Conditions: 150 mM KOAc, 10 mM MgCl2 and 150 mM bicine (pH 8.5), 24 C.
This 177-nucleotide RNA was probed chemically with 2A3.
It was measured as part of the RMDB library OK1LIB.
RNA sequence: GGGAACGACUCGAGUAGAGUCGAAAACUAUUAAGUAUUAUUCUAUCAUUCCUCACAGUAUUCGUUCUAUCCAAAGUGAUAGAAAAGCUUGGGCUGCCUUCUACGUAUAUAAACUUCAACCGUUAACAGAAUACACCCCGUUCGCGGGGUGUAUUCUAAAAGAAACAACAACAACAAC
Reactivity to 2A3 in 0.01 (KOAc 150mM, MgCl2 10mM, bicine 150mM(pH8.5), 24C), signal-to-noise 1, nucleotides 027 to 126: c090u070a090u280u180a280a130g100u010a000u060u100a080u140u190c050u070a200u040c000a010u160u000c000c000u020c010a060c000a080g010u030a300u090u300c000g050u020u000c000u000a000u000c000c030a300a000a000g090u180g010a030u000a060g000a000a000a000a000g050c050u050u070g000g000g000c000u030g000c000c020u000u020c000u020a020c000g010u060a000u000a020u000a190a190a010c000u000u010c090a000a120c050c000g030u050u170a100a010c060